[RMDB]
Chemical mapping of a 177-nucleotide RNA with DMS and 2A3. It was measured as part of the RMDB library OK2TRN. 2A3 adducts were read by reverse transcription with SuperScript II with manganese. Conditions: 150 mM KOAc, 10 mM MgCl2 and 150 mM bicine (pH 8.5), 24 C.
RNA sequence: GGGAACGACUCGAGUAGAGUCGAAAAGAGGAUACGAAUAGCUUCGUGCUUUCGAUAGCUUUGUAGCGGCGGCUACGUUCCCUAGGGGAGCCGCCUCCCCUGCUAUCGGCGCGAGGGGAGUAUCCGAAAUCGUGAUCAGUUUCGACUGAUCACGAUUAAAAGAAACAACAACAACAAC
Reactivity to DMS in 0.01 (KOAc 150mM, MgCl2 10mM, bicine 150mM(pH8.5), 24C), signal-to-noise 2, nucleotides 027 to 126: g000a210g000g000a000u000a010c010g010a140a150u010a190g000c000u000u000c010g100u000g000c050u000u000u000c030g000a040u000a000g010c000u000u000u000g010u000a120g020c190g010g010c050g000g000c000u000a190c090g010u010u000c020c000c000u000a120g020g030g020g000a030g010c030c060g030c040c000u010c010c030c050c060u010g010c010u000a040u000c010g000g020c040g020c010g010a020g000g000g000g010a260g010u000a020u000c010c000g010a080
Reactivity to 2A3 in 0.01 (KOAc 150mM, MgCl2 10mM, bicine 150mM(pH8.5), 24C), signal-to-noise 1, nucleotides 027 to 126: g140a030g020g000a000u030a000c030g050a090a170u130a150g160c010u000u000c010g000u020g020c030u140u130u290c020g000a010u000a000g020c030u070u070u240g070u070a040g020c060g040g010c000g020g010c010u060a050c060g130u080u080c010c000c010u030a050g040g020g000g080a010g020c020c000g020c030c000u020c000c000c000c000u000g000c000u000a020u070c010g010g000c000g010c010g000a000g030g000g010g010a020g020u010a010u000c000c000g000a010